[RMDB]
RNA sequence: GGGAACGACUCGAGUAGAGUCGAAAAGAGUGAUUUACAUUGAAAACGGUAUUGUCACAUUAUCUGAAAAUACAAUAGACGGUGAUACCAUUUACCUUGCGGGAGGUAGCGUAAACUCCAAUAUAGAAGGCUCAUACCUAUUCGUAGGUAUGAGCCUAAAAGAAACAACAACAACAAC
Reactivity to DMS in 0.01 (KOAc 150mM, MgCl2 10mM, bicine 150mM(pH8.5), 24C), signal-to-noise 2, nucleotides 027 to 126: g010a040g050u000g000a110u000u010u020a050c100a070u000u000g010a050a030a150a040c300g030g010u000a020u000u010g000u000c000a050c070a090u050u000a140u030c220u000g010a170a130a000a120u000a070c180a070a060u000a030g050a080c250g000g000u000g000a030u000a020c040c000a300u030u000u000a040c010c010u000u080g060c050g010g020g000a110g020g010u000a050g000c120g020u000a020a020a020c010u110c000c000a150a130u040a190u010a030g000a130
Reactivity to 2A3 in 0.01 (KOAc 150mM, MgCl2 10mM, bicine 150mM(pH8.5), 24C), signal-to-noise 2, nucleotides 027 to 126: g160a000g100u120g180a220u090u000u060a000c040a000u140u190g120a290a000a000a000c080g000g000u000a070u000u050g020u000c020a000c000a100u110u210a020u150c050u060g060a100a010a010a010u150a030c120a110a040u000a170g080a020c000g120g030u070g010a000u000a060c000c000a030u040u000u200a050c000c060u110u050g130c080g000g100g000a000g000g000u000a000g000c070g040u180a000a090a000c050u020c000c000a020a020u200a000u000a000g160a170